[RMDB]
RNA sequence: GGGAACGACUCGAGUAGAGUCGAAAACGCAACGAAACGAAACAAAUCGUUCAGAAAUACUUGACCACGAGGGCUCCCCUAUAGUCUGCUUUGGCGGUGCGGCAGGCCCCGUGCGAUAGGCUAACUGCAAUAACAUAACGUUCGCGUUAUGUUAUUGAAAAGAAACAACAACAACAAC
Reactivity to DMS in 0.01 (KOAc 150mM, MgCl2 10mM, bicine 150mM(pH8.5), 24C), signal-to-noise 9, nucleotides 027 to 126: c080g030c130a060a060c080g010a070a060a050c050g010a080a100a140c230a080a160a120u000c020g010u000u000c030a090g000a080a100a100u010a070c010u000u000g000a300c300c020a030c010g010a070g030g000g010c010u000c050c300c000c040u010a040u000a160g010u010c000u000g010c020u000u010u000g040g010c010g010g000u010g010c260g000g010c140a070g000g000c010c010c000c010g020u000g000c020g010a060u000a010g010g000c140u000a030a130c080u000g000
Reactivity to 2A3 in 0.01 (KOAc 150mM, MgCl2 10mM, bicine 150mM(pH8.5), 24C), signal-to-noise 6, nucleotides 027 to 126: c030g020c060a030a030c050g070a140a000a020c040g060a100a090a060c090a030a160a130u040c010g010u050u040c030a020g150a050a130a020u180a110c000u020u020g010a010c010c000a010c010g020a300g000g000g000c010u100c020c060c000c000u030a030u070a100g200u050c010u020g040c030u130u090u150g100g000c020g010g000u020g000c010g020g000c010a030g050g000c000c000c000c010g000u000g000c000g010a010u010a010g020g000c030u070a100a070c040u080g010